[RMDB]
RNA sequence: GGGAACGACUCGAGUAGAGUCGAAAAUUUUGGGCAGAUAACAACUGUUACGCGUCUAGCCACUGUAUUGUAAACACUACAACAAAUUUUAAGUUUAAUACACCUACGCGACAAGAUGAAUCGGAAACACACUAAUGAGCUUCGGCUCAUUAGUGUGAAAAGAAACAACAACAACAAC
Reactivity to DMS in 0.01 (KOAc 150mM, MgCl2 10mM, bicine 150mM(pH8.5), 24C), signal-to-noise 1, nucleotides 027 to 126: u000u000u000u000g000g040g000c000a070g030a030u000a050a070c120a070a100c070u000g000u000u010a120c110g010c150g010u000c050u000a030g000c040c020a030c170u000g000u010a030u010u000g020u010a020a050a040c040a040c090u000a020c120a110a080c210a060a040a180u020u000u000u030a060a070g010u000u000u000a040a020u000a010c030a000c100c010u000a030c100g000c020g000a130c010a110a140g000a040u000g000a050a070u010c050g000g030a130a020a050
Reactivity to 2A3 in 0.01 (KOAc 150mM, MgCl2 10mM, bicine 150mM(pH8.5), 24C), signal-to-noise 1, nucleotides 027 to 126: u160u130u020u100g070g030g070c040a020g000a030u030a190a000c070a000a080c020u040g030u010u070a100c110g010c000g000u090c100u070a030g010c020c020a010c020u050g020u000a040u030u060g070u090a040a030a060c060a030c090u120a070c090a170a020c060a020a220a080u130u300u190u270a100a060g020u010u080u000a060a010u000a060c010a010c070c030u000a000c000g000c040g000a020c020a000a020g000a080u110g080a030a080u040c020g000g060a020a020a000